[RMDB]
RNA sequence: GGGAACGACUCGAGUAGAGUCGAAAACAGGUGUUCGCACCUGAAAAAAACCUUUGUGGUUAUCACAGGACAUGAUCUCAGUACACGCCCAUUGGGCGUGGAACUGAUCAACAGCUCACAGUAACCACUCUGGUAAAAACAUGCCUUCGGGCAUGAAAUACUUGGUGACAUUCGUGUCACCAAGUAUAAAAGAAACAACAACAACAAC
Reactivity to 2A3 in 0.01 (KOAc 150mM, MgCl2 10mM, bicine 150mM(pH8.5), 24C), signal-to-noise 3, nucleotides 027 to 156: c010a000g010g010u030g020u120u140c220g040c090a030c000c020u010g000a160a010a000a000a000a000a010c020c000u040u000u010g000u000g000g010u020u030a060u100c110a110c230a300g070g000a010c010a040u050g020a010u010c020u000c010a010g000u000a000c000a000c000g000c000c020c070a230u290u300g010g000g000c000g000u000g010g000a010a000c010u010g000a000u010c000a000a110c040a050g030c010u020c020a060c010a030g000u000a000a000c000c000a010c010u000c000u000g000g000u060a060a050a000a000a070c000a010u010g000c000c010u060u090c280g050g010g000c000a000u030g000a030a010
Reactivity to DMS in 0.01 (KOAc 150mM, MgCl2 10mM, bicine 150mM(pH8.5), 24C), signal-to-noise 1, nucleotides 027 to 156: c070a030g000g020u000g020u000u000c300g060c040a050c000c010u020g020a000a000a120a190a080a110a030c020c000u000u000u000g000u000g000g030u000u000a010u010c070a280c090a080g060g000a090c070a300u010g010a050u010c040u000c040a110g010u000a140c010a000c000g000c000c010c000a290u000u000g090g040g010c000g040u010g020g000a090a120c010u000g000a040u000c010a030a030c020a210g020c010u000c020a080c200a200g010u000a020a010c000c010a010c040u000c000u000g010g000u010a000a060a050a100a180c000a030u000g000c000c000u010u000c290g070g000g000c010a040u000g000a010a100